[RMDB]
RNA sequence: GGGAACGACUCGAGUAGAGUCGAAAAGGGUCGUUCGCGACCCCAGCUUUCCUAAGUCUGCACUCUUUUGACGACCUUUUGACGCGUAUCGGAAACGAUACGCGAUAAGGUCGAUAAGAGUGCAAGGAUAUGGAUAUAAGCCGAAUUCGUUCGGCAACCAUCCUCAUGCCUUCGGGCAUGAGGAUGGAAAAGAAACAACAACAACAAC
Reactivity to 2A3 in 0.01 (KOAc 150mM, MgCl2 10mM, bicine 150mM(pH8.5), 24C), signal-to-noise 1, nucleotides 027 to 156: g000g010g010u010c010g000u050u130c170g040c010g080a000c000c000c020c040a010g180c060u050u160u020c000c000u000a070a050g030u000c020u000g000c000a000c000u000c000u080u030u070u170g260a140c030g000a010c000c000u160u070u050u230g190a050c060g130c130g000u000a000u000c000g020g040a240a020a000c000g000a000u000a000c000g000c000g010a000u020a000a000g000g010u000c000g000a000u020a000a020g000a000g000u010g000c000a000a000g000g000a040u100a070u300g050g000a010u090a000u090a280a020g000c000c010g030a040a000u060u050c300g060u140u000c000g000g090c000a000a010